This 177-nucleotide RNA was probed chemically with DMS and 2A3. Reactivities are given for positions 27 through 126.
RNA sequence: GGGAACGACUCGAGUAGAGUCGAAAAGCAUCCUGCCUAGCAAAGAAGCAAUUAGCCAAAAUGAUGCCUGGAGGCUUAACUGAAGCCAAACCUGCCACUCCAGAAGUCCAGGAGAUUGCUAAUGAGGAUCUUGUCGAUAUUUCGAUAUCGACAAGAUAAAAGAAACAACAACAACAAC
Reactivity to DMS in 0.01 (KOAc 150mM, MgCl2 10mM, bicine 150mM(pH8.5), 24C), signal-to-noise 5, nucleotides 027 to 126: g010c140a090u000c010c030u010g020c030c040u000a100g030c070a040a080a120g000a130a090g010c050a080a050u010u000a100g010c030c080a030a060a110a090u000g010a050u000g000c250c020u000g020g030a130g000g000c060u000u000a100a090c120u010g000a080a040g000c020c040a050a050a080c070c020u000g000c060c070a110c050u000c020c030a020g000a070a200g000u010c030c110a090g000g010a120g000a090u000u000g010c020u000a040a080u010g000a090g010g010
Reactivity to 2A3 in 0.01 (KOAc 150mM, MgCl2 10mM, bicine 150mM(pH8.5), 24C), signal-to-noise 4, nucleotides 027 to 126: g020c020a070u040c010c010u040g040c020c040u060a060g030c060a130a060a080g060a140a010g070c010a000a090u050u020a100g030c010c020a050a080a040a140u140g060a030u070g010c000c010u020g010g030a030g020g010c000u040u050a160a110c100u120g110a020a010g010c010c000a060a040a080c010c010u020g030c020c020a070c020u040c020c010a030g020a120a020g060u020c030c030a030g030g010a030g010a030u060u080g010c000u060a070a090u120g030a050g110g010